An RNA of 177 nucleotides, treated with DMS and read out base by base. The RNA was probed in 150 mM KOAc, 10 mM MgCl2 and 150 mM bicine (pH 8.5) at 24 C. The DMS profile rests on 2,065 reads. It was measured as part of the RMDB library OK2TRN.

[RMDB]
RNA sequence: GGGAACGACUCGAGUAGAGUCGAAAAAGUAAAUUAGGAGUUAUACAUUGCUUCUAUAGCAUCAGAAAUUGUAUAUCAGGCCAGGUGCAAAAGCUCACUCCUGAAAUCCAAGCACUUUGGGAGGCUAGUUUUAAUGACGAUUCGUCGUCAUUAAAACAAAAGAAACAACAACAACAAC
Reactivity to DMS in 0.01 (KOAc 150mM, MgCl2 10mM, bicine 150mM(pH8.5), 24C), signal-to-noise 3, nucleotides 027 to 126: a070g020u010a040a080a100u000u000a030g000g000a040g020u000u000a070u010a100c120a080u010u010g020c030u000u000c120u000a090u000a040g020c040a040u000c080a120g000a070a090a080u000u000g010u000a030u000a120u010c130a040g000g010c100c130a060g010g020u000g000c040a070a070a090a160g000c060u000c070a100c030u000c010c010u010g010a030a070a050u010c020c030a020a100g010c130a040c070u000u010u000g000g000g000a070g000g010c070u000a030